[RMDB]
RNA sequence: GGGAACGACUCGAGUAGAGUCGAAAAUCUCCUCUCUGCCUGACCCCUCAUCUUAGACGCACCGUGUCCGGCGCAGAGGAAGGCAAGGGGCACGCGCAGCAGGCCAGGCUCUCAGGCAGCACCGGAAAUACAUUGCCUCAUUCGUGAGGCAAUGUAUAAAAGAAACAACAACAACAAC
Reactivity to 2A3 in 0.01 (KOAc 150mM, MgCl2 10mM, bicine 150mM(pH8.5), 24C), signal-to-noise 1, nucleotides 027 to 126: u010c030u030c010c010u010c020u000c000u000g000c000c000u000g040a170c030c000c010c090u070c020a200u050c040u050u140a050g020a090c060g050c030a030c050c030g010u000g000u020c020c000g000g030c010g000c040a030g050a080g280g030a020a060g070g010c000a000a020g020g000g000g000c030a000c010g030c020g010c030a070g040c010a030g040g100c060c030a000g010g050c020u010c000u010c000a000g020g000c000a010g000c000a050c000c100g100g010a000a220
Reactivity to DMS in 0.01 (KOAc 150mM, MgCl2 10mM, bicine 150mM(pH8.5), 24C), signal-to-noise 3, nucleotides 027 to 126: u010c040u000c000c020u000c050u000c030u000g030c000c010u010g010a110c110c080c010c020u000c110a100u000c100u000u010a130g020a100c130g030c050a020c140c030g000u000g000u000c040c010g010g030c300g010c040a070g000a150g020g020a150a080g010g020c110a040a300g010g000g010g030c050a040c040g000c080g020c020a070g000c060a080g000g000c120c170a070g000g010c070u000c050u000c050a050g010g010c030a010g000c150a080c040c030g000g000a070a080
The record gives the reactivity of an RNA of 177 nucleotides to 2A3 and DMS.
Source: RMDB library OK2TRN, as collected in RNAgym.
For 2A3 the reverse transcriptase was SuperScript II with manganese.
For DMS, 2,065 sequencing reads were counted.
For DMS the reverse transcriptase was MarathonRT.